The data come from the RNA Mapping Database (RMDB), library M2PK50. Chemical mapping of a 177-nucleotide RNA with DMS and 2A3. For DMS the reverse transcriptase was MarathonRT. The DMS profile rests on 1,246 reads. The RNA was probed in 150 mM KOAc, 10 mM MgCl2 and 150 mM bicine (pH 8.5) at 24 C. The 2A3 profile rests on 5,281 reads.

[RMDB]
RNA sequence: GGGAACGACUCGAGUAGAGUCGAAAACACACUCCCUUCGGGGAGUGUGAAAGAACGCGUGGGACACGCAAGGAGGAGCGUGUGGGACGCGACAAAGCCAAAAAAGUGGAUAGUUCGCUAUCCACAAGUAGGAGUUGAAGUUCGCUUCAACUCCUACAAAAGAAACAACAACAACAAC
Reactivity to DMS in 0.01 (KOAc 150mM, MgCl2 10mM, bicine 150mM(pH8.5), 24C), signal-to-noise 2, nucleotides 027 to 126: c010a000c010a010c000u000c000c000c000u000u000c130g020g050g010g000a010g000u000g000u000g030a030a050a050g000a150a130c020g020c000g020u000g060g050g010a020c000a000c000g000c020a090a080g040g010a260g000g000a080g000c010g000u000g000u000g050g020g020a000c000g010c000g000a110c140a050a110a090g010c030c050a000a030a060a040a080a130g010u000g000g000a000u000a000g000u000u000c250g000c020u000a000u010c000c000a000c000a030a040
Reactivity to 2A3 in 0.01 (KOAc 150mM, MgCl2 10mM, bicine 150mM(pH8.5), 24C), signal-to-noise 3, nucleotides 027 to 126: c000a010c010a010c000u000c000c010c020u020u050c200g020g000g010g000a010g000u000g000u010g000a010a000a010g040a140a030c000g030c000g010u030g030g300g000a000c010a000c010g010c030a030a030g180g080a090g050g080a140g030c010g000u020g000u000g000g150g010a010c010g000c000g000a000c000a010a090a020g100c030c030a160a080a050a000a000a010g000u000g010g010a010u000a000g020u020u080c220g000c110u000a000u000c000c000a000c000a010a000